[RMDB]
RNA sequence: GGGAACGACUCGAGUAGAGUCGAAAAAGGAUCUUUCGUGUCCUACGCCCGCGAAUUCUUCGGCGAGAAGGUGGCCUUCGUCGCGGGCUGGAUGUACUUCCUGAACUGGGCCAUGACGGGGGUCGUGAGUCCAGUAAAUCUUCGGAUUUACUGGACUAAAAGAAACAACAACAACAAC
Reactivity to 2A3 in 0.01 (KOAc 150mM, MgCl2 10mM, bicine 150mM(pH8.5), 24C), signal-to-noise 6, nucleotides 027 to 126: a000g060g020a020u040c080u090u290u160c190g060u140g020u070c000c000u020a040c090g020c000c000c000g010c030g040a040a130u130u050c040u060u070c030g120g000c180g050a080g040a150a040g060g070u110g050g000c010c020u040u050c040g030u010c020g000c000g030g010g000c020u010g000g000a010u050g040u120a110c040u040u050c020c000u060g020a090a050c030u040g000g100g000c010c000a030u030g010a020c020g030g010g000g000g000u040c030g030u060g100
Reactivity to DMS in 0.01 (KOAc 150mM, MgCl2 10mM, bicine 150mM(pH8.5), 24C), signal-to-noise 4, nucleotides 027 to 126: a030g000g000a030u010c020u010u030u030c240g000u040g000u000c000c000u000a080c110g000c030c000c000g000c080g010a070a080u040u020c020u000u000c030g000g010c060g000a190g010a060a060g010g010u030g000g010c010c000u000u000c050g020u000c000g000c030g000g010g000c010u010g010g000a040u010g000u000a070c170u010u010c010c010u030g000a120a100c130u000g010g000g010c010c010a060u020g000a070c050g000g010g010g010g050u000c010g000u020g010
The record gives the reactivity of an RNA of 177 nucleotides to 2A3 and DMS. The RNA was probed in 150 mM KOAc, 10 mM MgCl2 and 150 mM bicine (pH 8.5) at 24 C. For DMS the reverse transcriptase was MarathonRT.